[RMDB]
RNA sequence: GGGAACGACUCGAGUAGAGUCGAAAAGGCAUUCCAGUGCAUGAGGGAAGCUGGGCAAAGGCACGAGGAUGGGAAAGUUCCGAUUGAAGACAGGGACUGGUGAGGAGUCUGGCUGGACUGAACUGAAAUGUAUAGGAUACACGAGGAGAGACAGGCAUCGUCGUGCCGAGUUCGCUCGGCACGACGAAAAAGAAACAACAACAACAAC
Reactivity to 2A3 in 0.01 (KOAc 150mM, MgCl2 10mM, bicine 150mM(pH8.5), 24C), signal-to-noise 1, nucleotides 027 to 156: g080g000c000a010u160u000c060c040a010g010u060g000c000a050u120g050a050g000g000g000a000a040g000c020u030g000g010g000c020a070a110a050g000g000c000a000c090g000a000g050g000a030u050g050g050g070a000a130a080g000u040u070c020c020g090a300u070u160g060a050a050g060a100c080a080g000g000g050a020c030u080g060g000u150g000a120g000g010a010g040u010c030u060g010g000c020u010g010g010a000c040u080g030a100a020c010u050g020a020a050a080u100g060u000a050u010a120g080g070a010u020a030c020a050c090g030a000g040g000a020g000a010g030a010c020a030g080g000c000a020
The record gives the reactivity of an RNA of 207 nucleotides to 2A3. The RNA was probed in 150 mM KOAc, 10 mM MgCl2 and 150 mM bicine (pH 8.5) at 24 C.